[RMDB]
RNA sequence: GGGAACGACUCGAGUAGAGUCGAAAAAUUUCGGUCCUAUGCAAUAUGAACCCAUGAACCAUGUCAGGUCCUGACGGAAGCAGCAUUAAGUGGAUCAUCAUAUGUGCCGUAGGGUAGCCGAGAUUUAGAAAUGCUCCUCAGUUUCGACUGAGGAGCACCUCACCUUAAUCUUCGGAUUAAGGUGAGGAAAAGAAACAACAACAACAAC
Reactivity to 2A3 in 0.01 (KOAc 150mM, MgCl2 10mM, bicine 150mM(pH8.5), 24C), signal-to-noise 4, nucleotides 027 to 156: a000u030u000u000c090g070g050u300c000c000u010a020u010g000c000a000a010u000a010u010g000a000a010c000c000c010a000u040g020a040a050c100c030a030u010g080u100c010a010g040g020u050c010c030u200g180a090c130g010g010a010a000g010c020a000g000c000a000u030u010a120a020g010u010g010g010a010u040c010a020u020c000a000u030a020u080g270u100g160c110c070g020u000a000g000g030g000u010a000g010c000c010g010a010g000a000u010u020u020a040g020a010a080a010u090g010c000u010c000c000u010c010a010g000u010u040u120c170g080a010c000u000g000a000g000g020a000g000c000a000
Reactivity to DMS in 0.01 (KOAc 150mM, MgCl2 10mM, bicine 150mM(pH8.5), 24C), signal-to-noise 1, nucleotides 027 to 156: a050u000u010u010c000g020g010u000c010c010u010a020u000g030c020a170a040u010a070u010g000a100a130c050c000c020a040u000g020a170a230c190c240a010u010g010u000c030a210g030g000u000c070c000u000g030a090c120g000g080a030a090g000c070a270g030c050a080u000u000a090a300g090u010g000g000a060u010c040a140u000c020a000u000a020u000g000u000g020c010c060g030u010a030g010g010g020u020a250g020c010c000g010a050g020a030u000u000u000a070g020a060a080a090u000g030c000u000c020c000u000c010a030g010u000u000u010c300g010a000c010u010g000a000g040g020a000g020c000a000
Record summary: Chemical mapping of a 207-nucleotide RNA with 2A3 and DMS. Values cover nucleotides 27 to 156. The 2A3 profile rests on 2,911 reads. For 2A3 the reverse transcriptase was SuperScript II with manganese. The reactions ran in a buffer of 150 mM KOAc, 10 mM MgCl2 and 150 mM bicine (pH 8.5), at 24 C. The data come from the RNA Mapping Database (RMDB), library ARCHII.